[RMDB]
RNA sequence: GGGAACGACUCGAGUAGAGUCGAAAACUGAUCGAAGCUCUGAUCAGGAUCAGAGAGGAGAGACUCUGAAGCUGAGAGAAGGACUGAUCCUGAUCUCCUGAGACUAGUCAGCUCUGACUUCGAUCAGCUCUAGCUGACUGACUGAAGGAGACUAGAGCUCUUAAUAUGGGUUCGCCCAUAUUAAGAGAAAAGAAACAACAACAACAAC
Reactivity to 2A3 in 0.01 (KOAc 150mM, MgCl2 10mM, bicine 150mM(pH8.5), 24C), signal-to-noise 8, nucleotides 027 to 156: c010u020g010a010u020c010g010a020a000g020c080u030c100u190g020a020u010c010a010g010g000a000u000c000a000g070a010g020a060g150g040a140g010a030g060a120c020u020c010u070g140a220a090g090c160u160g040a030g000a020g020a140a090g070g040a030c010u000g010a000u010c000c000u010g000a010u000c020u010c010c020u040g010a010g030a030c030u020a010g030u020c010a010g000c010u020c040u100g080a090c000u020u020c030g040a070u000c020a010g010c010u010c020u030a010g000c010u010g020a060c000u010g020a040c020u070g070a120a040g060g030a030g030a020c020u050a020g010a010g000
Reactivity to DMS in 0.01 (KOAc 150mM, MgCl2 10mM, bicine 150mM(pH8.5), 24C), signal-to-noise 3, nucleotides 027 to 156: c020u000g010a050u000c020g030a090a060g040c020u000c030u000g000a050u000c020a030g000g010a080u000c010a040g020a130g010a160g010g010a170g000a170g010a160c030u000c010u000g020a110a200g020c110u010g000a080g010a100g000a180a130g020g010a210c020u000g000a030u000c010c000u000g010a060u000c010u010c040c060u000g010a230g010a100c250u000a050g010u000c020a050g000c120u000c030u000g010a040c010u000u000c050g010a080u000c030a020g020c060u000c050u010a050g020c020u000g000a110c000u000g000a110c050u010g010a190a070g000g000a160g010a080c040u000a030g000a100g030